[RMDB]
RNA sequence: GGGAACGACUCGAGUAGAGUCGAAAAAGCACAGAAGAUGAAGCCGGCUGUGGCUGAACAGUGCUGCGUCGGUGCCGACACUGUGCGAGAAAACCCCAAUGUUACAAGUUCGCUUGUAACAUUGGGGCACUCGCUUAUAGUUCGCUAUAAGCGAGUGAAAAGAAACAACAACAACAAC
Reactivity to DMS in 0.01 (KOAc 150mM, MgCl2 10mM, bicine 150mM(pH8.5), 24C), signal-to-noise 6, nucleotides 027 to 126: a130g000c000a010c000a020g000a110a070g010a170u010g010a130a300g000c010c010g010g010c020u020g100u000g010g040c010u000g000a120a100c270a090g010u000g010c000u010g030c010g010u000c020g010g010u000g010c300c030g000a210c300a060c000u000g010u010g020c020g000a120g000a070a040a080a140c010c000c000c000a000a010u000g010u000u000a000c000a010a010g010u000u020c260g010c000u000u000g010u000a000a000c000a000u000u000g000g000g010g000
Reactivity to 2A3 in 0.01 (KOAc 150mM, MgCl2 10mM, bicine 150mM(pH8.5), 24C), signal-to-noise 7, nucleotides 027 to 126: a000g070c060a050c050a060g300a300a010g030a250u170g030a050a020g020c000c010g030g020c100u240g020u010g040g000c020u030g020a140a050c070a110g150u040g090c010u010g000c000g000u000c000g000g030u040g040c050c010g020a010c010a000c040u000g000u000g000c020g000a040g020a010a060a010a020c020c000c000c000a000a010u000g000u000u000a000c000a010a010g000u020u050c140g100c110u000u000g000u000a000a000c000a000u000u010g000g000g000g000